[RMDB]
RNA sequence: GGGAACGACUCGAGUAGAGUCGAAAAUAUACAUAAGAAGUCGGCACAGCUCCCGACUCGCGGUGAGCGAUGCGACGUCGCGCGAGCGACGUAGCUGCUGUGCGGACGGCUAGCAAAAGCUAGCCAACGUCCCAUUAGGUUUCGACCUAAUGGGACGAAAAGAAACAACAACAACAAC
Reactivity to 2A3 in 0.01 (KOAc 150mM, MgCl2 10mM, bicine 150mM(pH8.5), 24C), signal-to-noise 4, nucleotides 027 to 126: u090a000u030a010c080a040u220a080a120g200a220a030g070u050c100g190g000c000a000c000a000g000c000u010c030c000c000g090a050c010u010c000g010c020g070g120u290g120a020g020c000g010a010u060g010c020g020a010c020g000u010c000g000c000g000c040g020a040g010c000g000a010c000g020u010a010g010c000u010g000c000u000g000u010g060c000g000g020a020c020g000g000c000u000a000g000c010a110a100a300a090g000c000u000a000g000c000c000a010a010
Reactivity to DMS in 0.01 (KOAc 150mM, MgCl2 10mM, bicine 150mM(pH8.5), 24C), signal-to-noise 2, nucleotides 027 to 126: u060a080u080a130c140a110u030a110a070g010a110a170g020u010c000g000g020c030a020c020a000g030c010u010c010c030c000g000a110c170u000c020g000c000g050g010u050g020a300g000c030g000a030u010g010c040g000a060c010g010u000c010g000c010g000c300g000a230g000c020g000a020c010g000u000a040g030c010u000g000c020u020g020u010g000c060g000g050a000c010g030g020c000u000a000g000c020a150a120a160a100g020c000u000a000g000c000c010a070a060
Chemical mapping of a 177-nucleotide RNA with 2A3 and DMS. For DMS the reverse transcriptase was MarathonRT. The DMS profile rests on 2,899 reads. The 2A3 profile rests on 3,234 reads.